[RMDB]
RNA sequence: GGGAACGACUCGAGUAGAGUCGAAAAUGAUCUUGGGUAAGUGGCUUCACCUCUGAACAGUUUACCUCACCUGUGAAAUGGGACUGCCUCCCCAUGGAACUGCUGUGAAGAUUAAAACAUGGAGUAGACGACCAGAAUCAUUCGUGAUUCUGGUCGUAAAAGAAACAACAACAACAAC
Reactivity to DMS in 0.01 (KOAc 150mM, MgCl2 10mM, bicine 150mM(pH8.5), 24C), signal-to-noise 2, nucleotides 027 to 126: u020g000a040u000c080u010u010g000g000g000u010a080a120g020u000g000g010c040u000u010c050a090c030c010u010c040u010g000a090a100c120a100g020u000u000u000a090c040c040u000c020a030c080c040u000g000u000g000a200a140a010u000g000g000g020a100c090u030g000c100c070u010c040c000c000c010a050u000g000g000a300a080c010u030g010c140u000g010u010g020a100a010g000a140u000u000a040a030a050a040c070a120u010g000g010a090g000u000a100g010
Reactivity to 2A3 in 0.01 (KOAc 150mM, MgCl2 10mM, bicine 150mM(pH8.5), 24C), signal-to-noise 1, nucleotides 027 to 126: u100g000a030u000c000u070u060g020g000g020u100a090a080g030u040g120g030c010u000u000c010a040c040c020u000c030u070g050a080a010c040a040g000u040u060u070a060c000c000u000c030a070c010c010u010g010u000g020a040a000a070u050g010g010g000a030c060u050g030c000c010u030c010c010c030c000a000u000g000g000a010a030c000u050g010c050u080g040u020g040a070a070g040a060u160u190a090a140a030a000c090a080u150g040g010a030g040u150a020g040